Annotation:
Structure probing data (2A3) for a 177-nucleotide construct. The RNA was probed in 150 mM KOAc, 10 mM MgCl2 and 150 mM bicine (pH 8.5) at 24 C. It was measured as part of the RMDB library OK1LIB. 2A3 is a SHAPE reagent: it acylates the 2'-hydroxyl of flexible nucleotides of all four kinds.
RNA sequence: GGGAACGACUCGAGUAGAGUCGAAAAGGAUCGCCCGAAUAUUCAAGGGCGCGUCGGACUAAAUUCACGCGUUUUGCUGACUUCGAGGCGCCAGCUGACGGCCAUUUUUGUAUUCAGGAAGGUCUAACCGUCACGAAGCGUUCGCGCUUCGUGACGGAAAAGAAACAACAACAACAAC
Reactivity to 2A3 in 0.01 (KOAc 150mM, MgCl2 10mM, bicine 150mM(pH8.5), 24C), signal-to-noise 1, nucleotides 027 to 126: g020g000a040u070c000g160c010c000c000g000a120a060u160a120u140u170c000a090a100g070g000g000c020g000c000g050u040c150g000g000a110c100u160a030a130a130u230u250c170a040c010g000c000g050u000u000u040u040g020c040u020g080a170c050u100u180c050g060a020g000g170c090g000c000c000a070g000c000u020g000a090c040g020g000c000c090a170u020u020u000u060u070g050u020a190u040u040c000a000g000g020a060a000g030g030u000c000u050a180a080